[RMDB]
RNA sequence: GGGAACGACUCGAGUAGAGUCGAAAAGCCGAUGAAUUGCGGAGAAGCCUGGCUCGAAAUCGUCGACGCAUCGACGACGGUCCUGCCAUGAGACCGUAACGAGGACAUGUCGCCUCGAAUGGCGUCGUAUAACAUGAGUGGUUCGCCACUCAUGUAAACUUGUUGUUGUAUUCGUACAACAACAAGUAAAAGAAACAACAACAACAAC
Reactivity to 2A3 in 0.01 (KOAc 150mM, MgCl2 10mM, bicine 150mM(pH8.5), 24C), signal-to-noise 7, nucleotides 027 to 156: g050c010c020g010a020u070g040a070a170u110u120g020c030g000g030a050g030a100a020g030c010c040u050g010g000c010u030c080g070a080a090a080u020c010g010u000c000g010a030c060g020c140a130u070c010g010a010c000g000a000c010g000g000u000c000c010u050g040c010c010a030u020g020a010g000a060c020c020g010u070a020a010c010g010a000g000g010a020c030a110u220g040u140c110g010c000c000u010c000g000a020a020u030g000g010c010g020u040c040g010u060a110u040a210a010c000a000u000g000a000g000u010g040g000u060u090c180g060c070c000a000c000u010c000a000u000g000u000a010a000
Reactivity to DMS in 0.01 (KOAc 150mM, MgCl2 10mM, bicine 150mM(pH8.5), 24C), signal-to-noise 3, nucleotides 027 to 156: g050c020c000g000a120u010g000a060a080u000u000g020c020g000g010a140g010a040a130g020c020c010u000g030g040c000u010c050g010a050a020a060u000c020g020u000c000g010a080c140g030c110a190u000c020g010a010c020g010a020c010g010g010u000c010c010u000g030c020c130a090u000g010a100g000a050c000c030g000u010a060a110c020g020a110g050g010a130c040a140u000g030u000c050g010c000c020u000c040g000a060a100u000g010g010c040g010u000c040g000u010a110u010a100a060c000a000u000g010a020g020u000g010g000u000u000c300g020c010c000a010c010u000c000a000u010g010u000a020a060
Record summary:
This 207-nucleotide RNA was probed chemically with 2A3 and DMS. DMS adducts were read by reverse transcription with MarathonRT. Reactivities are given for positions 27 through 156.